Source: RMDB library OK3TST, as collected in RNAgym. Structure probing data (2A3) for a 207-nucleotide construct. The 2A3 profile rests on 1,794 reads. 2A3 adducts were read by reverse transcription with SuperScript II with manganese. The RNA was probed in 150 mM KOAc, 10 mM MgCl2 and 150 mM bicine (pH 8.5) at 24 C.
[RMDB]
RNA sequence: GGGAACGACUCGAGUAGAGUCGAAAAAUUUCGUAAAAAAUGAUCACUUUACGGUGCAAAUAUUGGCCGAUAUACUACGAUCUGAUGUUUGCGGUAUGAUAUUUAGUUCAAUAUACGAUCAAUAUACUACAUUGUCGGGUUCAUAUACUACGAUUGCCGUGAGACAUAGAUUCGUCUAUGUCUCACGAAAAGAAACAACAACAACAAC
Reactivity to 2A3 in 0.01 (KOAc 150mM, MgCl2 10mM, bicine 150mM(pH8.5), 24C), signal-to-noise 1, nucleotides 027 to 156: a000u110u100u040c010g010u040a030a000a000a050a030a070u040g010a030u110c030a030c110u070u070u090a020c030g040g020u030g010c030a080a050a040u020a030u010u020g000g020c010c010g010a030u050a000u020a150c120u060a000c040g110a110u060c000u050g050a010u090g040u060u130u080g120c090g070g030u150a160u160g050a010u030a060u050u130u120a030g010u000u060c020a090a020u030a030u010a160c020g010a020u040c000a020a000u030a000u010a050c070u020a020c020a040u060u060g030u000c020g000g000g040u000u020c050a030u080a000u040a080c000u000a080c000g010a050u020u120g090c030